[RMDB]
RNA sequence: GGGAACGACUCGAGUAGAGUCGAAAACAGAUCAGCUAGCUACAAAAAUAAAAGGGGUAUCAGGAAUAGGUGUCAUCAUGAACAGAAACAAAGAGGAAAAAACAUUUCCUAGCUGAUACACAUGAGUGAAUUGUGACCAGGGAAUUCACUCAUCAGAGGUGGACUAAAAUUUCGAUUUUAGUCCACCAAAAGAAACAACAACAACAAC
Reactivity to 2A3 in 0.01 (KOAc 150mM, MgCl2 10mM, bicine 150mM(pH8.5), 24C), signal-to-noise 3, nucleotides 027 to 156: c030a000g060a040u010c000a000g000c010u030a000g010c010u090a040c100a060a150a030a040a090u210a130a070a060a020g030g030g000g000u050a040u120c050a030g040g020a120a030u080a110g050g000u080g030u050c030a040u040c000a000u060g060a060a070c030a060g110a090a090a010c100a030a120a020g070a100g080g000a040a020a000a000a040a000c060a040u050u030u050c010c000u000a000g010c000u010g000a000u110a080c120a000c000a020u040g000a000g000u000g010a010a010u030u030g060u070g070a070c050c050a010g100g000g030a010a000u020u010c010a000c000u040c010a010u040c010a000g100a060
Reactivity to DMS in 0.01 (KOAc 150mM, MgCl2 10mM, bicine 150mM(pH8.5), 24C), signal-to-noise 1, nucleotides 027 to 156: c130a130g000a060u000c030a070g060c000u000a060g000c060u000a160c080a090a150a060a190a050u000a040a040a180a070g000g030g020g000u000a080u010c060a100g030g030a080a070u000a050g000g000u000g030u000c030a070u000c010a090u000g000a110a130c030a130g040a080a050a040c010a040a100a050g010a010g020g110a000a040a080a100a080a030c120a130u000u010u000c020c000u000a050g000c030u000g080a040u000a130c060a110c150a080u000g030a060g020u000g000a000a040u020u000g010u000g030a300c020c100a040g000g010g000a050a030u050u060c000a000c000u000c000a000u000c060a080g010a140